[RMDB]
RNA sequence: GGGAACGACUCGAGUAGAGUCGAAAAAAGCUCAUUUUCGAAUGAGCUUGAACCGUGAACGCAGGAUAACGCAGAAACGCGCCGCUGAACCUCCCAAGCGAAAGAUUAAGGUCUUCGGACCUUAAAAGUUAUGCACAAAUUUCGAUUUGUGCAUAACAAAAGAAACAACAACAACAAC
Reactivity to 2A3 in 0.01 (KOAc 150mM, MgCl2 10mM, bicine 150mM(pH8.5), 24C), signal-to-noise 2, nucleotides 027 to 126: a010a000g010c020u000c000a010u000u030u010u110c130g060a000a000u000g010a000g000c000u000u010g000a010a000c010c000g030u050g050a090a040c050g000c040a040g040g100a100u040a110a000c040g020c020a030g180a070a090a000c030g030c000g010c040c000g000c040u060g050a070a070c000c020u010c000c000c000a020a000g050c010g100a190a010a020g030a000u000u040a000a000g000g000u000c000u000u090c240g050g010a000c000c000u010u000a000a010a000a000
Reactivity to DMS in 0.01 (KOAc 150mM, MgCl2 10mM, bicine 150mM(pH8.5), 24C), signal-to-noise 4, nucleotides 027 to 126: a020a010g010c000u000c000a000u000u000u000u000c140g030a030a010u000g000a020g010c000u000u000g000a080a170c050c020g010u000g020a090a120c130g010c050a050g000g010a110u010a070a120c080g010c030a080g010a080a080a110c100g020c050g020c040c030g010c030u000g000a100a110c050c070u000c000c020c020a110a120g020c090g030a060a100a090g010a180u000u000a000a000g010g000u000c000u000u010c220g000g020a010c000c000u000u000a000a030a080a120
Chemical mapping of a 177-nucleotide RNA with 2A3 and DMS. For DMS, 3,505 sequencing reads were counted. DMS adducts were read by reverse transcription with MarathonRT.